[RMDB]
RNA sequence: GGGAACGACUCGAGUAGAGUCGAAAAUCUUGCCCUUUAUUGUUGGGUGCACCCUGGGACCCAGUAAUACCCGGGGGGAGGCGGGGUUAACCCAUACUAUGGGAACUGCUGGGUUCCUCGGAUGUCGGAGGGCGUUUGUUCGCAAACGCCAAAAGAAACAACAACAACAAC
Reactivity to 2A3 in 0.01 (KOAc 150mM, MgCl2 10mM, bicine 150mM(pH8.5), 24C), signal-to-noise 2, nucleotides 027 to 129: u020c020u040u130g010c000c000c080u050u100u000a290u010u080g100u030u130g000g000g030u050g000c030a060c000c000c000u040g000g040g040a120c020c000c050a000g010u030a050a050u050a100c020c000c000g000g060g030g010g000g000a000g000g070c000g020g000g000g000u100u130a010a070c000c000c000a000u000a070c040u170a090u080g110g000g000a000a000c010u030g070c020u050g000g080g000u090u000c000c000u000c000g000g000a090u120g060u060c000g000g030a060g060
Reactivity to DMS in 0.01 (KOAc 150mM, MgCl2 10mM, bicine 150mM(pH8.5), 24C), signal-to-noise 3, nucleotides 027 to 129: u020c110u020u030g020c010c000c040u020u000u020a090u010u000g030u030u020g040g040g040u040g080c060a070c010c020c090u060g050g000g030a080c000c030c030a060g000u040a000a130u020a270c060c000c030g050g080g030g000g040g000a030g040g030c030g040g000g000g050u060u000a070a110c000c000c090a050u010a040c230u080a100u000g000g040g000a150a060c100u000g000c070u060g020g010g070u050u000c030c010u000c300g040g020a000u040g050u020c010g030g010a160g000

Overview
Structure probing data (2A3 and DMS) for a 170-nucleotide construct. For DMS, 5,294 sequencing reads were counted. For 2A3, 1,398 sequencing reads were counted. The reactions ran in a buffer of 150 mM KOAc, 10 mM MgCl2 and 150 mM bicine (pH 8.5), at 24 C. The data come from the RNA Mapping Database (RMDB), library 15KLIB.